[RMDB]
RNA sequence: GGGAACGACUCGAGUAGAGUCGAAAAUAUCGAAGUGGUGUGCAUAUUUAUUCUCAAAUUGUCAAGUCAGAUCAGCUUGGUGAUAAGGUGUUGGUAGCUUCAUCUACUAUAGAUAAAGAAUUGAGAACCAUAUUAUGGCAUUCGUGCCAUAAUAUGGAAAAGAAACAACAACAACAAC
Reactivity to 2A3 in 0.01 (KOAc 150mM, MgCl2 10mM, bicine 150mM(pH8.5), 24C), signal-to-noise 5, nucleotides 027 to 126: u130a010u020c010g010a050a020g030u030g000g010u030g030u050g020c040a010u030a040u160u130u040a070u120u070c050u000c010a090a130a060u070u040g030u030c020a020a020g030u050c030a030g030a290u030c000a000g030c000u010u040g000g000u030g030a030u010a080a090g030g010u030g030u110u060g030g000u030a020g020c010u070u070c010a040u040c010u020a040c010u020a030u100a170g030a020u110a050a120a010g080a080a080u160u160g080a090g040a110a030
Reactivity to DMS in 0.01 (KOAc 150mM, MgCl2 10mM, bicine 150mM(pH8.5), 24C), signal-to-noise 5, nucleotides 027 to 126: u010a060u000c040g000a110a100g030u010g020g020u010g010u010g010c030a060u000a050u010u000u000a140u030u000c020u000c020a060a100a090u000u000g010u000c030a040a080g020u000c070a110g010a090u000c140a070g000c020u000u010g020g010u000g020a030u010a080a100g000g010u000g010u000u000g020g010u000a040g010c040u010u000c060a040u000c020u010a030c100u000a090u010a070g000a060u000a040a070a090g010a080a090u000u000g010a110g010a120a220